Notes:
This 177-nucleotide RNA was probed chemically with 2A3. For 2A3 the reverse transcriptase was SuperScript II with manganese.
RNA sequence: GGGAACGACUCGAGUAGAGUCGAAAAGAAAUCCCAUGCGUGUCAUCUGACUUCCACGUCUCGCUCUGCCUUCGCUCUGCGCUGUCUGCGUUCUGCAGCUUGGGUUUGGCUAGGGCAGAGGAUUCUGCCGGUUAAACGCCUUCGGGCGUUUAACCGGAAAAGAAACAACAACAACAAC
Reactivity to 2A3 in 0.01 (KOAc 150mM, MgCl2 10mM, bicine 150mM(pH8.5), 24C), signal-to-noise 1, nucleotides 027 to 126: g120a020a110a000u060c020c000c000a000u000g000c000g000u070g040u000c000a190u000c100u060g010a040c020u180u050c100c030a070c040g020u000c090u060c120g110c040u000c000u040g000c000c000u000u040c040g000c000u000c020u000g000c140g070c060u040g080u220c000u000g040c050g110u210u030c100u300g020c000a010g000c000u040u020g000g030g000u020u060u020g020g000c000u000a010g000g000g010c000a000g000a000g000g000a040u040u000c040u040g050

Background
The reactions ran in a buffer of 150 mM KOAc, 10 mM MgCl2 and 150 mM bicine (pH 8.5), at 24 C. The 2A3 profile rests on 641 reads.